[RMDB]
RNA sequence: GGGAACGACUCGAGUAGAGUCGAAAAGAAAUCUACCAGCAAUUUGACGCCAUACAAGCAAAUGCUCAAGUGGAUCGUCUUAUAACUGGUAGAUUGUCAUCACUUUCUGUUUUAGCAUCUGCUAAGCAGGCGGAGUAUAUUAGAGUGUCACAACAGCCUUUAGACCUCCUUUCGAGGAGGUCUAAAGAAAAGAAACAACAACAACAAC
Reactivity to 2A3 in 0.01 (KOAc 150mM, MgCl2 10mM, bicine 150mM(pH8.5), 24C), signal-to-noise 2, nucleotides 027 to 156: g020a000a060a000u000c000u000a000c000c020a000g010c040a060a080u000u000u070g000a010c000g000c000c000a020u100a200c030a010a030g030c000a120a300a260u300g010c010u030c050a090a210g010u020g010g010a120u230c020g000u000c020u030u060a110u030a140a140c000u000g010g000u000a000g000a000u000u000g010u000c010a060u060c000a030c040u040u100u060c020u010g000u010u300u020u040a040g010c040a190u250c200u300g000c000u030a020a010g030c020a020g040g000c100g030g000a050g040u070a080u010a010u190u170a050g050a060g090u110g030u060c060a000c010a130a150c040a070g030c000
Reactivity to DMS in 0.01 (KOAc 150mM, MgCl2 10mM, bicine 150mM(pH8.5), 24C), signal-to-noise 1, nucleotides 027 to 156: g000a170a050a000u000c000u000a040c060c020a000g000c010a070a160u000u000u000g000a020c020g010c000c060a040u010a040c290a110a030g040c000a090a140a130u000g070c000u000c060a140a300g010u010g010g010a010u020c020g000u000c010u000u000a080u000a180a030c000u000g000g000u000a000g000a000u000u000g070u040c020a130u000c140a130c030u000u000u020c020u010g020u000u000u020u020a050g030c010a210u010c180u000g090c000u010a060a030g000c040a000g030g000c120g010g050a020g010u000a100u000a130u000u000a180g000a130g020u000g010u000c020a040c050a130a100c100a090g020c070